Record summary: Chemical mapping of a 207-nucleotide RNA with DMS and 2A3. 2A3 is a SHAPE reagent: it acylates the 2'-hydroxyl of flexible nucleotides of all four kinds. For 2A3, 3,802 sequencing reads were counted. Source: RMDB library M2RFPK, as collected in RNAgym. The reactions ran in a buffer of 150 mM KOAc, 10 mM MgCl2 and 150 mM bicine (pH 8.5), at 24 C.
[RMDB]
RNA sequence: GGGAACGACUCGAGUAGAGUCGAAAAGUGAAAGCUCCUUCUCUCGCAAUGUGUAACUCAUGAUUCUCAUGACCCCUGGUUGGAGAGAUCCGGACUAGGAGCCAGGGGGUCUCUGAUUCUGCCAGCCAAAACUGUCGUAAGUUCGCUUACGACAGAACCCGUAAUGUUAGUUCGCUAACAUUACGGGAAAAGAAACAACAACAACAAC
Reactivity to DMS in 0.01 (KOAc 150mM, MgCl2 10mM, bicine 150mM(pH8.5), 24C), signal-to-noise 1, nucleotides 027 to 156: g030u000g000a070a070a170g030c030u010c030c010u040u000c000u000c040u010c020g040c040a140a110u010g050u000g010u000a110a080c040u010c040a060u010g000a130u010u000c070u000c030a110u000g010a130c010c000c010c010u000g050g010u020u040g030g000a070g010a100g010a110u000c000c030g040g000a120c070u010a100g010g010a160g000c010c020a090g010g040g030g020g000u000c000u000c030u000g030a150u000u000c050u020g000c020c000a090g000c000c060a020a040a090a100c020u000g030u000c010g020u010a030a040g000u000u000c300g040c000u000u000a010c000g000a020c000a010g000a000a070
Reactivity to 2A3 in 0.01 (KOAc 150mM, MgCl2 10mM, bicine 150mM(pH8.5), 24C), signal-to-noise 5, nucleotides 027 to 156: g080u070g060a150a030a020g000c000u020c010c010u060u030c030u000c010u000c030g060c080a070a150u130g050u040g020u150a050a060c020u030c050a040u030g060a140u220u020c090u020c060a030u120g050a090c000c000c000c030u000g020g020u030u070g050g010a050g010a030g010a090u020c050c050g060g070a070c080u100a050g030g010a010g000c010c000a010g020g000g000g000g010u000c000u000c020u020g080a130u100u010c030u090g030c020c020a040g000c040c030a050a080a080a110c030u000g000u000c000g010u010a000a000g010u030u050c120g020c120u000u000a000c000g000a000c000a000g000a000a010